[RMDB]
RNA sequence: GGGAACGACUCGAGUAGAGUCGAAAAAACAGUACCGAAACCAAGCCUGUGUUUGCAACAAAAUCGGAAGCUGGCAAUGGAAGCCACAUGAAGGAAUAUUCAAGCGGCAUUAACUCUAAACUCGGCGUACCAUGUCAGAAUUCGUUCUGACAUGGUAAAAAGAAACAACAACAACAAC
Reactivity to 2A3 in 0.01 (KOAc 150mM, MgCl2 10mM, bicine 150mM(pH8.5), 24C), signal-to-noise 2, nucleotides 027 to 126: a000a020c050a020g010u010a020c010c010g010a100a010a010c020c000a020a030g010c020c030u100g020u020g040u150u150u080g070c030a040a040c010a060a140a030a080u080c050g000g030a050a050g040c050u030g050g000c060a010a100u100g050g040a090a010g000c010c000a020c010a020u030g010a070a030g110g060a140a060u050a070u130u050c040a050a020g000c020g020g030c010a000u030u120a020a020c030u030c020u050a050a120a090c030u010c020g040g000c040g030
Reactivity to DMS in 0.01 (KOAc 150mM, MgCl2 10mM, bicine 150mM(pH8.5), 24C), signal-to-noise 3, nucleotides 027 to 126: a050a060c050a040g020u020a130c040c040g000a050a110a070c110c030a050a090g010c070c060u000g040u000g010u000u010u000g020c050a040a080c130a070a050a080a050u010c030g010g030a100a080g030c010u000g010g020c090a060a110u000g020g010a060a080g010c010c040a010c050a080u000g010a040a030g010g020a090a090u010a060u000u000c030a030a090g020c040g010g010c020a080u020u010a100a070c020u000c020u000a060a050a120c040u000c010g000g010c070g000